[RMDB]
RNA sequence: GGGAACGACUCGAGUAGAGUCGAAAAGUAAGGGUCUCAAAUUUAGUGGGAUACGUUAAACUUUUCCGUCUGUAAAGUUUAAAAGAGAUCAUCAGACUAGCAAUACAGAAUGCCUGUCACUCGGCAAGCUGUAAAGCGAAACCUCAAAUGAGUUGACACCUAAGAUGAGCUUCGGCUCAUCUUAGGUAAAAGAAACAACAACAACAAC
Reactivity to 2A3 in 0.01 (KOAc 150mM, MgCl2 10mM, bicine 150mM(pH8.5), 24C), signal-to-noise 2, nucleotides 027 to 156: g140u170a050a070g100g080g000u040c030u010c000a090a130a080u280u260u100a110g040u090g020g000g010a020u000a020c000g000u000u030a010a010a010c000u020u020u000u000c010c030g000u000c000u000g020u020a000a010a010g000u010u000u010a010a010a000a000g040a030g010a080u140c030a030u030c000a050g000a000c000u010a020g020c010a010a050u010a010c000a010g020a070a050u030g000c000c000u000g010u010c000a000c010u000c000g000g010c010a040a000g000c010u020g000u000a000a010a010g000c000g000a000a010a000c030c060u220c090a040a060a090u120g010a000g070u180u170g090a010c000